[RMDB]
RNA sequence: GGGAACGACUCGAGUAGAGUCGAAAACGAGGAGGUGGAGAUGCCAUGCCGACCCGAAGAGGAAAGAAGAACGCGAGACGCGAACCUGUGAGUGGAAACCCGCUUUAUUCACUGGGGUCGACAGCUCGACUAGGUAAUCGUUCGCGAUUACCUAGUCAAAAGAAACAACAACAACAAC
Reactivity to DMS in 0.01 (KOAc 150mM, MgCl2 10mM, bicine 150mM(pH8.5), 24C), signal-to-noise 1, nucleotides 027 to 126: c070g000a050g010g000a050g000g010u000g000g020a070g000a050u000g000c040c090a070u030g020c040c020g030a050c050c030c040g000a050a020g000a090g010g000a030a110a080g000a090a080g000a060a080c120g000c060g010a100g000a070c120g000c010g000a070a080c030c040u000g000u020g000a070g040u020g000g000a030a080a120c070c030c010g000c100u000u010u010a070u010u010c040a020c040u000g000g000g000g000u000c000g000a060c070a070g010c050u000c050
Reactivity to 2A3 in 0.01 (KOAc 150mM, MgCl2 10mM, bicine 150mM(pH8.5), 24C), signal-to-noise 1, nucleotides 027 to 126: c040g000a040g000g000a020g010g000u050g010g050a030g000a040u080g030c010c010a030u060g000c000c010g050a050c010c000c010g000a050a010g020a030g050g020a060a060a000g070a020a010g000a040a000c020g010c050g080a030g010a040c040g000c010g020a030a040c000c030u070g030u030g050a020g030u050g000g010a100a080a020c000c020c000g040c020u060u060u050a080u050u070c030a020c080u070g000g000g000g020u010c000g030a030c000a030g050c040u100c100